[RMDB]
RNA sequence: GGGAACGACUCGAGUAGAGUCGAAAAGAUAUGGACCUAUUAUGAGCAACAGCUCACUUCGGAAACGAAGUGAGACAUGCUCCUAAUGAGGUCCUAAGUCAAAACAGUUAAUGUUCGCAUUAACUGAUCAAUUGCGUAGCUUCGGCUACGCAAUUGAAAAAGAAACAACAACAACAAC
Reactivity to 2A3 in 0.01 (KOAc 150mM, MgCl2 10mM, bicine 150mM(pH8.5), 24C), signal-to-noise 1, nucleotides 027 to 126: g050a000u030a090u170g000g010a000c010c030u020a000u020u000a000u070g010a000g050c040a020a210c090a110g060c000u000c000a020c030u000u000c000g000g000a040a050a150c000g000a000a000g010u000g020a000g040a000c010a000u070g010c000u000c010c000u070a070a050u170g300a010g000g000u000c020c000u000a010a010g010u000c030a000a000a140a200c000a010g000u010u010a000a000u020g050u020u110c300g030c140a000u020u000a000a000c000u020g040a060
Reactivity to DMS in 0.01 (KOAc 150mM, MgCl2 10mM, bicine 150mM(pH8.5), 24C), signal-to-noise 2, nucleotides 027 to 126: g020a100u010a300u040g010g000a000c000c000u010a050u000u000a010u000g000a030g000c020a040a130c300a180g040c010u000c000a030c000u010u020c010g000g000a160a050a140c000g000a010a000g000u000g010a000g020a040c130a150u000g010c000u010c000c030u000a000a010u000g030a050g020g000u000c000c000u000a000a030g020u000c010a070a120a150a230c040a000g000u000u000a010a010u010g010u000u000c300g060c020a020u000u000a000a000c000u020g000a100

Chemical mapping of a 177-nucleotide RNA with 2A3 and DMS. For DMS the reverse transcriptase was MarathonRT. For DMS, 1,142 sequencing reads were counted.